[RMDB]
RNA sequence: GGGAACGACUCGAGUAGAGUCGAAAAACGUAUCGCGGUGAUCUCGCACGCAACGUCGCCGCUGCUGCGAAGCUGUUACGGGCGCCGAUGUGAGCAGCGGCGCCGACAGGAACACUGGAGAGAGAAAGAGGUCCACUAUAUUCGUAUAGUGGACCUCAAAAGAAACAACAACAACAAC
Reactivity to DMS in 0.01 (KOAc 150mM, MgCl2 10mM, bicine 150mM(pH8.5), 24C), signal-to-noise 2, nucleotides 027 to 126: a060c020g010u020a030u000c150g010c030g010g000u020g010a130u020c020u000c020g030c050a110c130g050c000a080a160c030g010u010c050g040c010c000g020c000u000g020c030u010g000c090g000a140a150g000c020u010g000u020u050a030c230g000g010g020c030g000c060c040g000a170u030g030u090g000a120g000c020a040g000c010g000g000c000g020c040c010g000a000c030a090g010g000a110a070c130a040c040u030g000g000a300g000a000g000a010g000a040a090a180
Reactivity to 2A3 in 0.01 (KOAc 150mM, MgCl2 10mM, bicine 150mM(pH8.5), 24C), signal-to-noise 4, nucleotides 027 to 126: a000c090g040u120a090u110c100g000c050g030g010u050g040a090u030c010u050c060g030c040a090c010g030c020a020a050c020g030u020c020g020c030c000g010c020u010g000c020u010g000c000g030a070a010g000c030u090g050u170u100a100c130g060g070g000c040g040c030c030g030a050u170g050u100g210a040g040c020a000g020c010g000g000c000g000c000c000g040a020c000a000g070g050a110a060c050a040c130u020g030g000a090g000a000g000a000g030a110a120a000